[RMDB]
RNA sequence: GGGAACGACUCGAGUAGAGUCGAAAACUUAUACGUAUCUCGCAAGGACUCGGAGCCUUUGGACGCAGGAAGUACUGACAAUCAUCUUGGAAGAACGUCAAGAACUAAUAUUGUCUUGAUUUAUGCAUCUACGAUAUGGGUUCGCCCAUAUCGUAGAAAAAGAAACAACAACAACAAC
Reactivity to DMS in 0.01 (KOAc 150mM, MgCl2 10mM, bicine 150mM(pH8.5), 24C), signal-to-noise 3, nucleotides 027 to 126: c040u000u010a120u000a110c130g010u010a120u010c040u000c040g000c130a070a140g010g010a060c030u000c080g010g010a130g020c020c040u000u000u010g000g010a030c050g000c040a030g000g000a060a070g010u010a070c080u020g010a040c090a040a060u010c120a070u000c060u000u000g000g000a080a080g010a060a090c300g000u000c000a010a010g000a050a070c120u000a070a070u010a110u010u000g000u000c010u000u000g010a030u000u000u010a060u000g020c140a120
Reactivity to 2A3 in 0.01 (KOAc 150mM, MgCl2 10mM, bicine 150mM(pH8.5), 24C), signal-to-noise 3, nucleotides 027 to 126: c030u130u140a060u060a210c030g060u030a060u050c060u030c040g010c020a000a060g030g000a030c030u030c150g070g030a060g050c000c000u090u050u100g070g000a000c040g030c040a020g040g050a050a040g040u040a040c030u050g060a020c010a000a050u050c030a020u030c020u020u040g060g030a040a040g050a110a030c040g050u020c010a000a000g010a060a020c060u080a060a200u100a120u290u170g030u010c000u000u040g040a060u050u050u110a130u130g040c020a050